Structure probing data (DMS and 2A3) for a 177-nucleotide construct. 2A3 adducts were read by reverse transcription with SuperScript II with manganese. For DMS the reverse transcriptase was MarathonRT. The DMS profile rests on 3,999 reads. For 2A3, 10,613 sequencing reads were counted.

[RMDB]
RNA sequence: GGGAACGACUCGAGUAGAGUCGAAAAGAUAUGGAAGCUACAGUGGGAGCCUGCAGUCGGAAACGACUGACAGGCAUCGAUCACUGACGGCUUCCUAAGUCAAAACGGUAGUGUUCGCACUACCGAACCUCCAUUAUUUGUUCGCAAAUAAUGGAGGAAAAGAAACAACAACAACAAC
Reactivity to DMS in 0.01 (KOAc 150mM, MgCl2 10mM, bicine 150mM(pH8.5), 24C), signal-to-noise 3, nucleotides 027 to 126: g000a050u000a260u000g010g010a030a010g020c010u000a170c030a000g010u010g000g000g010a090g040c000c000u000g000c000a000g000u000c000g030g010a080a040a100c000g010a030c010u000g000a070c010a010g000g010c000a010u000c190g020a110u020c010a010c000u000g010a090c230g000g010c000u000u000c000c000u000a000a070g000u000c010a060a090a140a270c020g010g000u000a000g000u000g020u000u010c220g020c010a020c000u000a000c000c000g010a020a050
Reactivity to 2A3 in 0.01 (KOAc 150mM, MgCl2 10mM, bicine 150mM(pH8.5), 24C), signal-to-noise 3, nucleotides 027 to 126: g020a010u030a020u080g000g010a000a000g010c000u030a040c020a010g010u020g020g170g050a070g000c020c000u010g000c010a000g010u010c000g000g020a060a030a010c020g010a010c010u010g070a120c000a000g000g010c000a010u010c000g010a030u040c000a010c020u020g180a300c160g020g000c000u000u000c000c000u000a000a000g010u000c020a000a030a100a140c020g010g000u000a000g000u010g060u130u100c300g020c130a000c010u000a010c000c000g010a010a010